[RMDB]
RNA sequence: GGGAACGACUCGAGUAGAGUCGAAAAGAGGUAGUGAGGGCUAAGCUGCAUGCCGUGGUUCCUGCCACCACGUAAAACAGGUAGGGAAAACACAACUGCCAACAACGAAUUGGCACUCGCUGCUUAAUUAAAAGCAGCCGUCUUCCCAAGUUCUGCUCAGUAUGAAGGAGUUCGCUCCUUCAUACUGAAAAGAAACAACAACAACAAC
Reactivity to 2A3 in 0.01 (KOAc 150mM, MgCl2 10mM, bicine 150mM(pH8.5), 24C), signal-to-noise 3, nucleotides 027 to 156: g070a010g000g030u060a020g020u050g050a050g020g020g010c030u020a050a020g020c020u050g040c030a040u110g060c000c010g000u000g000g000u040u120c000c010u020g000c000c010a140c020c010a030c080g140u200a000a000a020a030c020a010g000g010u020a000g050g000g020a040a130a080a000c150a000c030a080a120c080u080g000c010c010a010a020c010a050a080c060g060a100a110u020u000g000g000c030a020c040u070c040g000c000u000g000c000u040u040a090a050u200u220a090a250a040a010g020c000a000g000c000c000g030u000c040u050u010c000c000c000a040a000g020u020u010c010u010g020c000u010
Source: RMDB library RSTRND, as collected in RNAgym. This 207-nucleotide RNA was probed chemically with 2A3. Reactivities are given for positions 27 through 156. Conditions: 150 mM KOAc, 10 mM MgCl2 and 150 mM bicine (pH 8.5), 24 C. The 2A3 profile rests on 3,049 reads.